RNA sequence: GGGAACGACUCGAGUAGAGUCGAAAAGAGCCACAUACCUACCCAAGGUGAAAGCUCCUUCUCUCGCAAUGUGUAACUCAUGAUUCUCAUGACCCCUGGUUGGAGAGAUCCGGACUAGGAGUCAGGGAAAGCCGCUGCCGAUUCGUCGGCAGCGGAAGUCUGAAUUACGUUUCGACGUAAUUCAGACAAAAGAAACAACAACAACAAC
Reactivity to 2A3 in 0.01 (KOAc 150mM, MgCl2 10mM, bicine 150mM(pH8.5), 24C), signal-to-noise 1, nucleotides 027 to 156: g010a000g010c070c010a000c060a060u300a030c010c020u080a140c020c020c020a060a050g000g000u010g020a080a050a000g000c000u030c000c030u090u050c020u010c050u080c040g080c170a190a230u100g070u030g000u130a030a040c030u030c080a090u060g070a290u150u000c030u010c030a220u030g010a010c000c000c010c000u000g010g010u010u040g030g000a030g020a010g000a030u020c000c000g120g000a060c000u020a000g020g000a000g010u000c000a000g000g000g000a040a060a030g020c040c000g010c060u000g000c020c030g030a010u030u030c050g020u030c010g110g000c030a000g010c000g000g020a000a000